This 177-nucleotide RNA was probed chemically with DMS and 2A3. The RNA was probed in 150 mM KOAc, 10 mM MgCl2 and 150 mM bicine (pH 8.5) at 24 C. For 2A3, 554 sequencing reads were counted. Values cover nucleotides 27 to 126.
[RMDB]
RNA sequence: GGGAACGACUCGAGUAGAGUCGAAAAGUUCAACGAUCGUUGAUACAAAAUGCGUCAAGAAUCUAGAGUUUAGUGUUCGUAUCGGAGACAUGUGCAAGGAAUCGUCUGAUCUUGAGGUCAAGGAUGGGCCCGUGAAGUGAUUCGUCACUUCACGGGCAAAAGAAACAACAACAACAAC
Reactivity to DMS in 0.01 (KOAc 150mM, MgCl2 10mM, bicine 150mM(pH8.5), 24C), signal-to-noise 1, nucleotides 027 to 126: g000u000u000c020a050a040c120g000a030u000c120g000u020u020g010a070u000a020c070a080a100a120a120u000g010c020g000u000c050a040a130g010a010a040u000c060u000a100g010a160g000u000u000u000a070g010u000g010u010u020c050g040u010a050u000c130g020g010a220g010a040c120a050u020g010u000g000c050a050a080g000g000a070a050u000c080g010u010c090u000g000a050u010c020u020u000g030a140g010g020u000c040a100a080g000g000a100u000g000g000
Reactivity to 2A3 in 0.01 (KOAc 150mM, MgCl2 10mM, bicine 150mM(pH8.5), 24C), signal-to-noise 1, nucleotides 027 to 126: g030u090u050c010a030a000c000g080a220u070c070g070u030u030g000a000u000a150c070a070a180a050a050u150g090c020g070u060c110a060a030g010a030a050u080c040u130a130g030a150g190u120u140u190a090g010u020g050u070u000c020g100u060a010u090c180g000g060a080g010a020c020a060u170g040u080g000c030a030a030g060g040a080a070u060c000g100u000c110u080g020a000u010c030u050u160g140a070g090g000u080c050a080a000g000g000a070u140g100g090